[RMDB]
The record gives the reactivity of an RNA of 207 nucleotides to 2A3.
The RNA was probed in 150 mM KOAc, 10 mM MgCl2 and 150 mM bicine (pH 8.5) at 24 C.

RNA sequence: GGGAACGACUCGAGUAGAGUCGAAAAGAAAUUACGUUUCCUUUACACUUCUCAAACCGGGAUCAAGAGAAGCAAAGCAUCCCUCAUAUCCACGAUGGAGGGUGUCGUGGAGUAUACUGUACCGAAAAGAGCGAACACGGCUUCGGCCGUGUUCGAAGUAAAGUAAUCCCUUCGGGGAUUACUUUACAAAAGAAACAACAACAACAAC
Reactivity to 2A3 in 0.01 (KOAc 150mM, MgCl2 10mM, bicine 150mM(pH8.5), 24C), signal-to-noise 1, nucleotides 027 to 156: g010a020a100a000u270u140a030c040g000u000u010u020c010c000u070u110u050a040c030a030c020u130u060c000u000c020a130a130a210c060c090g090g000g050a020u030c030a270a040g000a010g010a030a010g060c130a120a020a000g010c020a010u030c000c000c000u060c030a040u030a050u100c020c010a000c020g030a010u050g060g100a030g050g100g020u000g000u010c030g010u010g000g000a000g040u010a000u000a050c120u080g040u100a050c030c030g010a030a000a080a040g080a050g050c000g000a000a030c000a000c000g030g000c020u090u110c280g040g050c020c010g010u020g000u000u000c000g000a000a000
For 2A3, 624 sequencing reads were counted.